[RMDB]
RNA sequence: GGGAACGACUCGAGUAGAGUCGAAAACGUUCGCUACCGAGGAGCGAGCUAUCCAGCGCAUCGCCGUGAUAGCGGCCACUGCCCAGUUCGAGAUCGGCGUACCAGUCGUCGCCGAGGUGGCGCGCCACAUGAUGCUCCCUUUCGAGGGAGCAUCAUGAAAAGAAACAACAACAACAAC
Reactivity to DMS in 0.01 (KOAc 150mM, MgCl2 10mM, bicine 150mM(pH8.5), 24C), signal-to-noise 4, nucleotides 027 to 126: c150g020u000u000c010g020c010u000a080c010c070g010a160g010g020a150g020c010g020a090g010c000u010a040u010c070c050a090g000c050g020c150a130u000c130g010c020c000g020u010g010a110u010a060g000c030g020g010c030c070a020c060u010g010c020c030c070a070g010u000u010c050g000a150g000a160u010c020g000g010c020g000u000a070c120c090a080g010u010c110g020u000c030g020c020c010g000a120g010g030u000g010g000c030g010c040g010c040c090a180
Reactivity to 2A3 in 0.01 (KOAc 150mM, MgCl2 10mM, bicine 150mM(pH8.5), 24C), signal-to-noise 3, nucleotides 027 to 126: c020g040u060u030c020g000c010u050a120c020c040g050a070g050g000a040g070c020g020a010g000c000u010a060u120c050c040a060g000c050g000c060a070u120c080g000c020c010g060u080g130a190u140a150g060c000g000g000c020c020a040c040u060g000c000c010c010a040g060u070u120c040g020a040g000a270u060c000g030g020c040g030u060a160c020c040a060g080u060c010g020u040c000g020c030c000g010a010g000g030u020g010g020c040g030c020g030c010c020a060